The record gives the reactivity of an RNA of 207 nucleotides to 2A3 and DMS. Values cover nucleotides 27 to 156. It was measured as part of the RMDB library RNAMAK. Conditions: 150 mM KOAc, 10 mM MgCl2 and 150 mM bicine (pH 8.5), 24 C.
[RMDB]
RNA sequence: GGGAACGACUCGAGUAGAGUCGAAAACGUAUCGUUCGCGAUACGAAAAAAGCGUACUACCUGUGGUAUAGGGAGCUGAAGUGUCCCAAAUAGGACACGGCAGCGAGGAUCUAUACGUAACAUCAGGUAUCGCAAAAAAGGACGUUUCGACGUCCAAUGCAUUAAAUACCUUCGGGUAUUUAAUGCAAAAAGAAACAACAACAACAAC
Reactivity to 2A3 in 0.01 (KOAc 150mM, MgCl2 10mM, bicine 150mM(pH8.5), 24C), signal-to-noise 3, nucleotides 027 to 156: c010g000u000a000u000c000g010u050u100c250g020c000g110a000u040a010c040g100a080a000a000a000a000a010g050c060g050u140a120c040u010a010c010c000u000g000u010g070g000u000a000u000a010g000g000g000a010g000c000u010g000a020a000g040u000g000u020c000c010c000a120a120a050u220a080g020g000a000c000a000c000g010g010c010a000g000c010g050a200g000g010a010u010c000u000a000u020a010c000g090u120a150a050c050a130u220c020a000g000g010u010a030u160c030g020c000a110a060a000a000a000a060g030g000a000c030g000u030u090u110c240g090a030c000g020u000c010c000a000a040
Reactivity to DMS in 0.01 (KOAc 150mM, MgCl2 10mM, bicine 150mM(pH8.5), 24C), signal-to-noise 2, nucleotides 027 to 156: c030g010u000a000u010c010g020u000u010c300g060c010g000a020u000a030c000g040a010a030a030a090a050a090g000c020g040u010a090c130u000a000c030c010u000g000u000g000g010u000a000u010a010g000g000g000a140g030c000u000g000a030a020g030u000g010u010c000c010c020a060a150a190u000a040g000g020a020c000a000c000g000g000c020a000g010c010g010a080g000g000a050u000c000u000a010u000a010c030g010u010a130a130c070a050u000c000a010g020g010u000a020u000c000g030c010a000a040a060a090a070a100g050g000a030c020g000u000u010u000c140g030a060c030g020u000c000c000a020a100